[RMDB]
RNA sequence: GGGAACGACUCGAGUAGAGUCGAAAAAACACUGUGUUGGAUAGGUGGGAGGCUUUGAAGUGUGGACGCCAGUCUGCAUGGAGCCGACCUUGAAAUACCACCCUUUAAUGAAGAAAAACAAAGCCAAUCAGAAAAGAAAGUUCGCUUUCUUUUCUGAAAAAGAAACAACAACAACAAC
Reactivity to 2A3 in 0.01 (KOAc 150mM, MgCl2 10mM, bicine 150mM(pH8.5), 24C), signal-to-noise 1, nucleotides 027 to 126: a000a000c130a010c050u150g030u020g000u110u040g040g020a050u020a130g070g000u090g010g060g010a070g080g000c050u300u190u090g040a040a000g020u000g000u020g020g000a000c000g080c080c050a050g000u000c000u000g000c000a000u040g000g000a000g000c020c010g030a050c020c030u020u030g020a010a030a010u050a030c010c040a040c020c000c000u060u150u080a190a080u210g130a040a180g050a060a210a060a010a000c070a000a090a000g000c030c000a000a060
Reactivity to DMS in 0.01 (KOAc 150mM, MgCl2 10mM, bicine 150mM(pH8.5), 24C), signal-to-noise 4, nucleotides 027 to 126: a040a060c040a080c110u000g010u000g030u000u000g010g010a110u010a050g010g010u010g010g010g020a240g010g020c010u000u000u000g000a150a120g010u000g010u000g000g010a020c000g020c150c240a120g010u000c010u010g000c010a010u000g000g020a020g030c010c010g000a110c120c050u000u000g010a100a070a060u000a070c010c020a050c030c020c030u000u010u000a090a090u000g000a060a090g000a040a060a070a120a090c090a060a080a110g010c070c080a090a150